[RMDB]
RNA sequence: GGGAACGACUCGAGUAGAGUCGAAAAUCCAGUUCGAUGCCGUGCAGCGACUCGGACUGGCGUUCACACCACCCAAACGCGAAGUCGGGCUGUACUGCUACUAUGACACCGAUAACUAUCAGAUGGAUCCGUACUACCCAUUCGUGGGUAGUACGGAAAAAGAAACAACAACAACAAC
Reactivity to DMS in 0.01 (KOAc 150mM, MgCl2 10mM, bicine 150mM(pH8.5), 24C), signal-to-noise 1, nucleotides 027 to 126: u000c000c000a050g020u000u000c000g000a060u040g000c040c000g010u010g000c080a050g000c000g010a010c050u000c000g000g000a020c000u000g040g000c100g000u000u000c090a080c110a170c100c090a110c050c020c050a060a060a070c040g080c010g000a060a140g070u000c030g000g000g000c010u000g000u010a130c020u000g000c040u010a000c150u000a010u000g000a020c020a060c040c020g030a040u000a000a110c120u000a110u020c050a040g000a110u000g000g000a280
Reactivity to 2A3 in 0.01 (KOAc 150mM, MgCl2 10mM, bicine 150mM(pH8.5), 24C), signal-to-noise 1, nucleotides 027 to 126: u000c000c000a010g010u020u050c000g010a020u190g000c050c000g020u090g000c070a050g030c090g090a050c020u010c010g030g000a000c000u010g070g000c030g030u080u030c040a090c090a110c010c010a060c010c060c010a000a100a000c080g030c010g070a060a000g060u030c060g020g010g000c000u020g000u020a080c020u030g030c020u060a070c040u140a100u180g110a070c020a000c020c000g030a010u040a120a070c050u140a200u130c050a090g030a210u000g000g120a010
Structure probing data (DMS and 2A3) for a 177-nucleotide construct.
For DMS, 975 sequencing reads were counted.
For DMS the reverse transcriptase was MarathonRT.